[RMDB]
RNA sequence: GGGAACGACUCGAGUAGAGUCGAAAAUAACAAAAAGCGCCAAGACGACGUCGCACAGGCUGUGGAGCGACGUGGCGCAUAAACGCAGAUAGAUACACAGCCUGAGGACAGAAGAACUGUCCACAAACAUCCGCAUAGGUUUCGACCUAUGCGGAUGAAAAGAAACAACAACAACAAC
Reactivity to DMS in 0.01 (KOAc 150mM, MgCl2 10mM, bicine 150mM(pH8.5), 24C), signal-to-noise 2, nucleotides 027 to 126: u070a110a070c280a050a040a090a050a100g020c010g000c000c000a040a070g050a080c190g000a150c000g020u000c000g020c020a090c020a100g000g030c010u000g020u000g020g000a050g010c000g010a000c050g020u000g000g040c000g000c000a000u030a000a120a150c190g000c140a030g030a190u000a060g000a070u010a190c010a020c020a000g030c000c000u030g000a240g000g000a000c000a030g000a070a140g000a050a030c000u000g000u000c000c000a120c080a000a130a170
Reactivity to 2A3 in 0.01 (KOAc 150mM, MgCl2 10mM, bicine 150mM(pH8.5), 24C), signal-to-noise 3, nucleotides 027 to 126: u080a000a020c070a040a100a000a050a010g030c000g020c000c030a140a010g170a080c080g000a000c000g020u000c000g020c010a050c030a050g000g000c010u000g000u000g000g080a120g000c010g000a000c000g000u010g000g000c020g010c000a000u000a000a050a010c040g030c060a050g070a240u150a060g090a010u100a080c000a000c000a000g040c000c000u020g010a000g060g010a000c000a030g020a120a010g030a220a080c000u010g000u030c010c010a010c000a000a020a000

This 177-nucleotide RNA was probed chemically with DMS and 2A3. The reactions ran in a buffer of 150 mM KOAc, 10 mM MgCl2 and 150 mM bicine (pH 8.5), at 24 C. Reactivities are given for positions 27 through 126.